Notes
This 177-nucleotide RNA was probed chemically with 2A3 and DMS. Source: RMDB library OK2TST, as collected in RNAgym. The 2A3 profile rests on 951 reads. Conditions: 150 mM KOAc, 10 mM MgCl2 and 150 mM bicine (pH 8.5), 24 C.

RNA sequence: GGGAACGACUCGAGUAGAGUCGAAAAGAGAAUCUGUCAAAACCAGCGCCACCCAUAGCUAGAGAAAAAGAGCUUACCUGACUGGGUGAAUAGUUUGAUGUGCUUGAUUCCUUUGCGAGCACUGUUCUCAGUCAUCAGGAUUCGUCCUGAUGACUGAAAAAGAAACAACAACAACAAC
Reactivity to 2A3 in 0.01 (KOAc 150mM, MgCl2 10mM, bicine 150mM(pH8.5), 24C), signal-to-noise 1, nucleotides 027 to 126: g040a010g010a040a040u030c040u070g050u090c060a050a030a000a080c010c020a030g010c020g010c160c000a020c000c040c000a000u040a010g000c010u010a000g010a000g060a190a140a090a000a080g140a030g090c030u050u050a030c010c090u080g060a090c030u010g080g020g000u020g060a080a120u090a050g060u000u000u290g060a050u150g030u050g030c040u040u030g000a020u120u070c000c000u110u050u120g030c050g020a010g000c020a010c090u050g130u120u020c010
Reactivity to DMS in 0.01 (KOAc 150mM, MgCl2 10mM, bicine 150mM(pH8.5), 24C), signal-to-noise 2, nucleotides 027 to 126: g000a160g000a080a060u000c050u010g010u010c030a060a080a140a070c100c040a030g000c080g020c090c010a040c040c030c010a040u010a110g000c020u010a060g010a170g010a080a060a080a130a120g010a120g000c040u000u010a110c070c060u000g010a080c130u000g000g020g050u000g020a060a070u010a070g000u010u000u010g010a070u000g000u000g000c020u000u010g010a050u010u000c060c080u010u000u030g000c040g030a030g020c020a040c020u000g000u000u000c070